[RMDB]
RNA sequence: GGGAACGACUCGAGUAGAGUCGAAAAUUACUAUUGGAUUUUGCUGCCGGAAUAGGGCUUUCGGGACACUUAUUCCUUUGCUUAAGACCAACUCUGUUUUCGCCUUUGCCCCUUCAUCAUUAUACAAAAGAAUGUGAGCAUUCGUGCUCACAUUCUUAAAAGAAACAACAACAACAAC
Reactivity to 2A3 in 0.01 (KOAc 150mM, MgCl2 10mM, bicine 150mM(pH8.5), 24C), signal-to-noise 2, nucleotides 027 to 126: u070u090a080c090u040a060u100u120g000g000a040u020u000u000u170g020c000u060g040c040c000g020g040a050a050u030a110g020g000g000c000u030u010u050c110g020g000g000a010c040a020c080u030u030a000u040u000c000c000u020u050u230g020c030u010u050a030a000g020a040c000c000a010a040c020u020c040u090g060u000u020u020u030c030g000c000c000u050u040u070g020c000c000c000c060u070u020c010a020u010c020a030u050u140a130u080a300c090a030a180
Reactivity to DMS in 0.01 (KOAc 150mM, MgCl2 10mM, bicine 150mM(pH8.5), 24C), signal-to-noise 1, nucleotides 027 to 126: u050u000a140c050u010a170u020u060g000g000a230u020u040u000u040g000c000u000g030c200c100g000g000a010a030u010a020g000g000g030c020u000u000u020c130g000g040g030a050c040a020c050u040u000a010u000u000c000c000u050u050u000g000c000u010u000a110a060g020a000c060c000a030a260c100u000c140u000g010u000u000u000u000c040g000c000c050u000u000u020g010c010c000c000c020u000u010c030a050u000c020a080u000u020a100u020a080c300a090a080
Source information:
The data come from the RNA Mapping Database (RMDB), library RFM100. This 177-nucleotide RNA was probed chemically with 2A3 and DMS. For 2A3 the reverse transcriptase was SuperScript II with manganese. The DMS profile rests on 1,128 reads. High DMS reactivity at an A or C suggests that its Watson-Crick edge is free. Conditions: 150 mM KOAc, 10 mM MgCl2 and 150 mM bicine (pH 8.5), 24 C.